[RMDB]
RNA sequence: GGGAACGACUCGAGUAGAGUCGAAAAGAAGACGUGACGAAAAGUCACGAAAAUAAAGUGCGAAAUAAAUUAGGAAACUGAACUGCAAAGCACAAGCAGAAAAGGUAACGGAGACGUUACCAAAAGAGUCCUUUUAGGAUUUCGAUCCUAAAAGGACAAAAGAAACAACAACAACAAC
Reactivity to DMS in 0.01 (KOAc 150mM, MgCl2 10mM, bicine 150mM(pH8.5), 24C), signal-to-noise 3, nucleotides 027 to 126: g030a160a120g030a120c000g030u000g020a050c000g010a060a080a110a190g000u020c000a020c000g020a040a040a150a090u060a090a060a080g020u020g020c020g020a100a110a100u050a030a030a090u040u010a050g030g020a090a050a080c060u040g000a030a100c040u010g030c000a030a070a050g010c020a030c050a110a160g000c040a000g040a110a030a070a050g000g000u000a000a010c010g000g000a190g010a070c000g000u010u030a000c000c000a010a010a070a130g000a110
Reactivity to 2A3 in 0.01 (KOAc 150mM, MgCl2 10mM, bicine 150mM(pH8.5), 24C), signal-to-noise 4, nucleotides 027 to 126: g100a030a020g120a040c010g000u010g010a000c000g110a050a150a120a030g000u000c010a000c000g020a010a020a000a000u130a030a100a020g020u020g050c030g110a030a030a080u230a040a080a060u210u110a080g050g060a080a060a040c070u080g020a090a020c000u020g000c020a060a060a030g020c010a010c010a020a010g000c010a000g070a100a040a030a030g000g000u000a010a000c020g000g010a060g030a030c010g010u000u000a000c000c000a000a000a000a010g030a000
This 177-nucleotide RNA was probed chemically with DMS and 2A3.